[RMDB]
RNA sequence: GGGAACGACUCGAGUAGAGUCGAAAAGUUAAAAGAACAAGCCAAAGAAACAGCUGGAAAACUAUUAACUCUUGGCCUUAAAAAAGGGGAUCGCGUUGCUGUUAUUGCAGAAAGCGAUAGCGAUUUCAACCUCUGUCAAAUUCGUUUGACAGAGGUUAAAAGAAACAACAACAACAAC
Reactivity to DMS in 0.01 (KOAc 150mM, MgCl2 10mM, bicine 150mM(pH8.5), 24C), signal-to-noise 2, nucleotides 027 to 126: g010u010u010a010a070a110a070g000a130a110c110a070a080g010c010c050a070a090a180g020a210a110a050c160a100g000c030u000g020g020a110a090a090a090c020u000a080u000u000a040a010c020u000c040u010u000g020g010c010c020u000u010a010a010a050a060a050a110g000g010g000g000a020u000c000g030c010g000u000u000g000c000u000g010u010u000a060u010u040g000c170a150g010a060a080a100g000c000g000a000u000a060g030c030g020a080u000u000u000c000
Reactivity to 2A3 in 0.01 (KOAc 150mM, MgCl2 10mM, bicine 150mM(pH8.5), 24C), signal-to-noise 1, nucleotides 027 to 126: g000u040u040a020a030a020a000g090a080a040c040a060a020g030c010c000a090a060a130g150a050a180a030c030a050g000c040u050g020g060a090a010a000a070c030u020a030u250u080a020a030c000u000c030u070u090g080g010c010c030u200u140a070a200a050a000a000a100g020g000g000g000a010u010c030g000c020g040u020u010g000c000u010g040u100u080a090u070u260g040c040a050g180a200a090a000g040c030g040a010u010a140g020c000g000a000u000u000u050c000
Chemical mapping of a 177-nucleotide RNA with DMS and 2A3. The RNA was probed in 150 mM KOAc, 10 mM MgCl2 and 150 mM bicine (pH 8.5) at 24 C. 2A3 adducts were read by reverse transcription with SuperScript II with manganese. The data come from the RNA Mapping Database (RMDB), library OK2TST. Values cover nucleotides 27 to 126.